[RMDB]
RNA sequence: GGGAACGACUCGAGUAGAGUCGAAAAAAAAAGGACCUACAGCGGAGCGAGUGACUGAAAACGGCAAAGUCACGAAGCAUCGUUAUACCUAAAUGGUCGUAGCGAAAUAAGAGUUGUUCCCAGUAAAGAUCAAACCAGUAUUCGUACUGGUUUGAUCAAAAGAAACAACAACAACAAC
Reactivity to DMS in 0.01 (KOAc 150mM, MgCl2 10mM, bicine 150mM(pH8.5), 24C), signal-to-noise 2, nucleotides 027 to 126: a040a020a100a100a120g000g000a040c010c000u000a030c040a170g010c120g000g000a150g020c030g000a240g000u000g000a000c010u000g020a060a030a070a100c180g000g000c130a050a120a020g000u000c000a000c010g020a040a210g000c000a180u000c000g020u000u000a030u000a050c030c000u010a060a100a050u020g010g000u000c060g090u000a020g020c010g000a000a090a040u020a050a120g040a040g000u000u010g000u000u000c000c000c000a100g010u020a030a100a120
Reactivity to 2A3 in 0.01 (KOAc 150mM, MgCl2 10mM, bicine 150mM(pH8.5), 24C), signal-to-noise 2, nucleotides 027 to 126: a000a000a000a060a060g110g010a000c000c000u010a010c040a030g050c060g130g040a050g020c000g050a050g000u000g010a000c020u040g070a020a090a090a100c080g110g000c050a090a040a000g000u010c010a010c010g000a040a010g010c000a030u010c000g020u000u000a010u020a030c000c000u090a250a250a130u190g000g010u050c120g030u010a000g010c000g030a040a160a040u160a200a000g000a000g000u000u000g000u000u000c020c000c000a000g000u010a000a030a020

About this RNA
Source: RMDB library M2PK90, as collected in RNAgym. An RNA of 177 nucleotides, treated with DMS and 2A3 and read out base by base. The RNA was probed in 150 mM KOAc, 10 mM MgCl2 and 150 mM bicine (pH 8.5) at 24 C. 2A3 adducts were read by reverse transcription with SuperScript II with manganese. Reactivities are given for positions 27 through 126. For 2A3, 1,783 sequencing reads were counted. For DMS the reverse transcriptase was MarathonRT.